[RMDB]
RNA sequence: GGGAACGACUCGAGUAGAGUCGAAAAUCUGACACCUGCGGGCCUUGAGGUGCAUGUGGUCUCGGCUGGGCUUGACUGUAAGACCGUCUUUCCGUCCGGUGUAGCGGCCCCCCCUGCUGCUGGGGAGGGAUGAAUUGAUCUUCGGAUCAAUUCAUCCAAAAGAAACAACAACAACAAC
Reactivity to DMS in 0.01 (KOAc 150mM, MgCl2 10mM, bicine 150mM(pH8.5), 24C), signal-to-noise 1, nucleotides 027 to 126: u020c000u000g020a160c070a050c020c060u000g020c130g040g020g010c080c060u010u000g010a030g000g020u000g010c040a050u000g000u010g010g010u010c040u010c100g000g000c020u010g020g020g020c080u000u000g010a040c080u000g020u020a070a110g000a140c070c050g030u010c070u000u000u000c040c040g020u010c110c050g010g000u010g010u000a170g000c020g040g030c020c010c000c020c020c010c020u000g020c040u000g010c050u000g000g000g000g000a120g000